RNA sequence: GGGAACGACUCGAGUAGAGUCGAAAAUAUUUCGCGCCAUUGUAGCUCAGUGCUAGAGCGCUUCACUCGUAUAAAAAUACUGCCAUGAAGAGGUCCGCGGUUCAAUCCCGCGUGGUGGCAAUAAAAACUUUUGCAGAGUAUUCGUACUCUGCAAAAGAAAAGAAACAACAACAACAAC
Reactivity to DMS in 0.01 (KOAc 150mM, MgCl2 10mM, bicine 150mM(pH8.5), 24C), signal-to-noise 1, nucleotides 027 to 126: u000a110u000u000u000c070g000c120g030c010c060a070u000u000g010u000a090g010c000u010c080a060g010u020g030c140u030a030g000a050g000c000g000c010u000u000c050a000c020u000c260g000u030a020u010a020a090a150a120a030u010a030c060u000g010c170c040a090u010g030a030a060g000a070g000g000u020c030c020g000c030g000g020u000u000c270a110a300u020c150c000c000g020c000g000u000g000g000u000g000g020c020a110a080u000a010a110a070a050a090